[RMDB]
RNA sequence: GGGAACGACUCGAGUAGAGUCGAAAAAAUCAAUUGCAGAACGUAACGAGCGAGUCAAAAAAGGCGAGCAGGGUUACAUUGACAUGAUGAAAAAUCGUGCGGCGGUUGAACAGCAAUAUGCUACUAAAACAAAGGAGAAUAUCAGGAAGGAAGCCGACAGUGGUACAGAAUUCGUUCUGUACCACUGAAAAGAAACAACAACAACAAC
Reactivity to DMS in 0.01 (KOAc 150mM, MgCl2 10mM, bicine 150mM(pH8.5), 24C), signal-to-noise 2, nucleotides 027 to 156: a080a170u010c020a030a060u000u010g000c050a240g020a070a100c080g060u000a040a050c010g020a300g020c000g000a290g020u000c000a000a120a100a150a050a140g000g010c000g030a290g020c040a040g000g000g010u010u010a030c010a090u000u000g020a120c000a000u010g000a070u010g010a040a070a030a090a060u000c030g050u020g030c020g000g000c030g020g000u000u000g020a030a060c120a090g000c050a070a050u000a050u000g000c000u000a060c020u010a010a000a010a050c020a040a020a030g040g000a090g030a020a020u000a070u020c020a030g000g010a060a050g010g010a070a090g010c050c020g010a180
Reactivity to 2A3 in 0.01 (KOAc 150mM, MgCl2 10mM, bicine 150mM(pH8.5), 24C), signal-to-noise 3, nucleotides 027 to 156: a000a000u090c040a020a040u060u050g030c020a020g050a180a040c060g010u010a000a030c000g010a000g050c020g000a000g010u010c010a060a140a140a170a080a030g030g010c040g000a020g010c000a020g180g070g000u040u010a020c020a000u050u060g040a050c010a020u020g010a010u020g070a030a060a070a080a020u010c020g000u020g010c030g070g000c010g000g040u020u060g040a120a050c030a060g050c020a040a050u080a070u260g020c020u020a080c020u030a020a000a050a050c080a040a110a040g040g040a080g050a060a000u020a020u050c000a020g010g010a030a000g030g010a020a010g040c010c000g020a010